[RMDB]
RNA sequence: GGGAACGACUCGAGUAGAGUCGAAAAGGGGUCGCUAGUUGUCAGGGACCUCUUAGCCUUGGAUUUACCAGCUGAAGCCUCCACGGCUGGUUGUCAGGCUAACGUCCCUUGGAUUUACUAGCGACGGAGGCACCCAAAACCAUACUUCGGUAUGGAACAAAGGAAUAGGGUUCGCCCUAUUCCUUUGAAAAGAAACAACAACAACAAC
Reactivity to DMS in 0.01 (KOAc 150mM, MgCl2 10mM, bicine 150mM(pH8.5), 24C), signal-to-noise 1, nucleotides 027 to 156: g000g000g020g010u000c000g010c020u000a040g030u000u050g000u000c040a060g020g030g010a040c000c030u010c020u000u020a000g020c020c020u000u000g020g000a090u000u000u000a060c010c000a000g010c020u020g000a060a110g030c050c020u000c020c040a300c030g000g000c000u000g040g000u000u000g020u000c040a070g010g030c000u010a020a030c090g000u000c000c000c020u000u030g010g000a090u000u010u000a020c060u000a030g090c030g010a000c040g030g010a110g030g030c020a230c040c000c010a030a040a100a210c010c000a020u010a030c000u000u010c300g020g020u000a000u000g050g010a100a150
Reactivity to 2A3 in 0.01 (KOAc 150mM, MgCl2 10mM, bicine 150mM(pH8.5), 24C), signal-to-noise 2, nucleotides 027 to 156: g090g000g000g020u000c000g010c000u000a010g000u020u080g020u000c050a030g000g000g000a000c010c000u000c000u000u000a000g020c000c010u050u210g190g060a100u180u110u240a030c000c010a000g030c000u060g070a190a010g030c030c050u120c040c040a040c010g000g010c000u010g000g000u000u040g010u020c040a010g020g000c000u010a010a030c230g000u000c010c000c010u000u070g030g000a030u140u150u170a060c010u000a000g060c000g000a010c000g000g010a000g010g020c040a050c000c000c030a080a080a020a020c000c010a020u000a000c020u030u080c200g050g000u000a000u000g020g000a020a030
Chemical mapping of a 207-nucleotide RNA with DMS and 2A3. Values cover nucleotides 27 to 156. The reactions ran in a buffer of 150 mM KOAc, 10 mM MgCl2 and 150 mM bicine (pH 8.5), at 24 C.